[RMDB]
RNA sequence: GGGAACGACUCGAGUAGAGUCGAAAAGGCUUAUCAAGAGAGGGGGAGUGACUGGCGCGAAGAACCCCGGCAACCAGAAAUGGUGCCAAUUCCUGCAGCGGAAACGUUGAAAGAUGAGCCGAAACAACAUUAGCGGGUAUUUCGAUACCCGCUAAUGAAAAGAAACAACAACAACAAC
Reactivity to DMS in 0.01 (KOAc 150mM, MgCl2 10mM, bicine 150mM(pH8.5), 24C), signal-to-noise 4, nucleotides 027 to 126: g000g010c000u000u000a010u020c040a140a100g020a110g010a160g010g000g000g000g010a130g020u010g000a100c030u020g000g000c040g020c080g010a070a120g010a090a160c030c010c010c030g010g000c020a020a040c000c000a020g000a050a110a160u000g000g010u010g000c010c010a100a150u010u000c000c020u000g030c030a040g020c010g000g000a120a030a100c030g040u020u000g000a090a080a080g000a010u010g000a030g000c000c010g000a060a070a100c160a060a160
Reactivity to 2A3 in 0.01 (KOAc 150mM, MgCl2 10mM, bicine 150mM(pH8.5), 24C), signal-to-noise 5, nucleotides 027 to 126: g000g000c000u010u020a010u030c060a160a030g090a020g050a140g120g000g020g000g000a080g040u080g040a060c050u100g020g040c060g020c010g080a060a060g020a050a060c000c000c020c000g000g000c020a080a170c000c000a000g020a030a050a030u050g000g010u010g000c010c000a010a040u070u030c000c010u060g040c020a000g020c000g020g000a030a040a010c020g020u020u030g030a120a090a020g020a020u000g000a000g000c000c000g000a030a030a010c060a030a030
Conditions: 150 mM KOAc, 10 mM MgCl2 and 150 mM bicine (pH 8.5), 24 C.
Chemical mapping of a 177-nucleotide RNA with DMS and 2A3.
For DMS the reverse transcriptase was MarathonRT.